[RMDB]
RNA sequence: GGGAACGACUCGAGUAGAGUCGAAAAAGUAGUCCUUACGAGGACUACAACCAUUUCGCGCACUCUCUCACCGGUCAGAGAGGCGAGAGAGCUCGGGAAAUGAAGAGCCGAGGUUACGACCUCGGCAACUCAAUAACGUUUUCGAACGUUAUUGAGUAAAAGAAACAACAACAACAAC
Reactivity to 2A3 in 0.01 (KOAc 150mM, MgCl2 10mM, bicine 150mM(pH8.5), 24C), signal-to-noise 9, nucleotides 027 to 126: a000g000u000a000g000u000c000c000u030u020a080c300g100a020g010g000a000c000u000a000c000a000a000c000c000a000u000u010u000c280g010c000g000c140a010c010u000c000u000c000u000c000a040c030c010g160g120u200c130a050g080a030g020a060g170g000c010g000a000g000a000g000a000g010c040u010c000g060g010g020a010a000a010u050g030a070a040g050a020g050c000c000g000a000g020g000u040u080a090c230g040a030c070c000u000c000g000g000c000a000
Reactivity to DMS in 0.01 (KOAc 150mM, MgCl2 10mM, bicine 150mM(pH8.5), 24C), signal-to-noise 9, nucleotides 027 to 126: a070g020u000a000g000u000c000c000u010u010a120c180g030a040g000g010a020c000u000a000c000a080a130c100c000a020u000u000u000c000g000c000g010c140a180c000u000c000u000c010u000c010a050c000c010g010g010u020c240a130g010a140g010a150g000g010c040g000a010g000a010g010a010g000c140u010c010g000g000g010a000a010a010u000g000a090a120g000a110g010c000c000g010a010g000g010u000u010a110c190g010a050c000c000u000c000g000g000c000a000
Chemical mapping of a 177-nucleotide RNA with 2A3 and DMS. The reactions ran in a buffer of 150 mM KOAc, 10 mM MgCl2 and 150 mM bicine (pH 8.5), at 24 C. Source: RMDB libraries RFM100 and RFMREP, as collected in RNAgym. Values cover nucleotides 27 to 126.